[RMDB]
RNA sequence: GGGAACGACUCGAGUAGAGUCGAAAAGUGAUAUUCAGAAUAUUCAAUAAACAUAAUUAUGUAAGUCACAAAUUUAAAAAUCAUUUCUCUUUCUUCUCCAGUCUAAGGAUAGAUAUGGGACCGGGUGCAGUGGCUCAUGCCUGUAAUCCUAGCACUAGACUGAGUAAUGAUUCGUCAUUACUCAGUCAAAAGAAACAACAACAACAAC
Reactivity to 2A3 in 0.01 (KOAc 150mM, MgCl2 10mM, bicine 150mM(pH8.5), 24C), signal-to-noise 2, nucleotides 027 to 156: g010u000g020a010u030a150u150u100c020a010g070a070a050u080a100u130u120c080a110a100u120a300a140a030c040a030u100a090a040u290u100a050u090g030u020a090a060g030u060c000a000c060a110a080a150u190u300u280a160a150a040a050a040u050c030a060u010u120u000c030u000c000u010u190u040c060u110u030c000u030c020c020a050g020u010c040u130a120a050g070g030a040u030a090g040a010u090a090u150g080g000g010a070c020c000g100g000g020u120g050c050a090g040u060g130g000c020u010c070a020u180g030c000c000u000g000u020a000a000u000c000c000u010a010g070c040a010c110u040a050